[RMDB]
Chemical mapping of a 207-nucleotide RNA with DMS and 2A3. In probing experiments dimethyl sulfate is read out at A N1 and C N3, which are open when not base-paired. For DMS the reverse transcriptase was MarathonRT.
RNA sequence: GGGAACGACUCGAGUAGAGUCGAAAACGCUGGGCAAAGCGCCAAUAGGAGCAUCGAUCUAUACGAAGCUCCUGAAGCGCGCACGGGAGCUGAGUAUAGGGAGCUCCUAAAAAUGCUUUGCCUGUGCUGAAGCGCGCACGGCAACCGAAAGGUGCGAGUCUUCAGUGAAGUUCGCUUCACUGAAGACAAAAGAAACAACAACAACAAC
Reactivity to DMS in 0.01 (KOAc 150mM, MgCl2 10mM, bicine 150mM(pH8.5), 24C), signal-to-noise 1, nucleotides 027 to 156: c090g000c030u030g000g020g060c020a010a060a080g010c000g040c110c060a160a300u000a030g010g010a000g000c000a260u000c140g030a060u000c010u010a050u000a100c000g040a300a070g020c010u000c010c000u020g020a050a010g010c010g000c000g010c050a300c040g000g000g040a010g000c020u000g020a300g000u000a030u000a070g030g000g000a010g000c000u000c000c010u000a000a030a100a080a100u000g010c010u000u010u010g000c000c000u000g060u010g050c010u000g010a060a010g030c040g010c030g040c000a300c030g000g020c000a120a080c030c050g000a030a110a130g020g010u000g000c040g000a250
Reactivity to 2A3 in 0.01 (KOAc 150mM, MgCl2 10mM, bicine 150mM(pH8.5), 24C), signal-to-noise 2, nucleotides 027 to 156: c040g010c020u050g010g000g010c010a000a000a000g010c010g010c030c010a040a100u050a040g000g000a010g000c020a040u300c070g050a020u030c010u010a000u000a020c020g000a030a010g000c010u020c000c000u010g000a080a020g010c000g010c020g000c010a000c000g020g000g000a000g000c010u020g010a000g000u000a010u000a000g000g010g000a010g000c000u000c010c000u000a000a000a000a000a000u060g000c000u010u000u000g000c000c000u000g000u000g010c000u030g010a130a040g000c010g000c000g000c000a010c010g000g000c020a030a020c010c000g060a090a040a020g040g000u040g010c010g010a070